[RMDB]
RNA sequence: GGGAACGACUCGAGUAGAGUCGAAAAGAUGCAUUCGUGCAUCGUGGUCGCGUACUACUGCUAGCUAUAACGACGAUAAGUUCGUCCCAAAUAGGACGAACUUUUGACGUCGUAUAGAACUACUAGCAGUAUCGCAUUUUCCGUAGUUCGCUACGAACGCUGCAAUUUGAUUCGUCAAAUUGCAGCGAAAAGAAACAACAACAACAAC
Reactivity to 2A3 in 0.01 (KOAc 150mM, MgCl2 10mM, bicine 150mM(pH8.5), 24C), signal-to-noise 4, nucleotides 027 to 156: g000a030u000g010c040a060u030u190c300g070u060g000c030a020u040c030g010u040g060g180u190c130g000c010g030u060a090c040u000a010c010u030g000c010u020a020g000c000u000a000u040a300a070c010g000a000c000g000a070u010a070a020g000u000u020c030g000u060c000c000c030a250a300a200u300a070g000g000a010c000g000a000a000c000u000u020u020u040g110a030c010g020u000c000g000u000a000u010a000g010a020a050c150u220a000c000u000a300g000c000a000g000u000a000u020c000g000c000a010u000u020u130u040c040c030g000u020a010g010u040u070c190g050c140u060a010c080g120a070a020
Reactivity to DMS in 0.01 (KOAc 150mM, MgCl2 10mM, bicine 150mM(pH8.5), 24C), signal-to-noise 1, nucleotides 027 to 156: g000a030u000g020c030a030u010u000c300g000u010g060c000a000u000c000g000u020g010g030u030c080g000c000g000u000a100c140u000a020c020u000g020c020u000a020g000c010u000a080u000a160a070c030g000a020c020g020a250u000a030a010g030u000u000c000g020u000c010c000c000a010a170a300u010a070g000g010a000c000g000a010a010c000u000u000u010u000g020a200c080g000u000c000g050u000a090u000a070g000a090a160c060u000a160c020u000a010g020c000a030g020u000a020u010c040g010c060a210u000u000u000u000c000c000g020u000a090g020u000u000c150g000c070u000a020c020g000a040a190
Chemical mapping of a 207-nucleotide RNA with 2A3 and DMS. Values cover nucleotides 27 to 156. It was measured as part of the RMDB library RNAMAK. As a SHAPE reagent, 2A3 marks flexible, mostly unpaired nucleotides at the ribose 2'-OH. The DMS profile rests on 2,715 reads. The RNA was probed in 150 mM KOAc, 10 mM MgCl2 and 150 mM bicine (pH 8.5) at 24 C.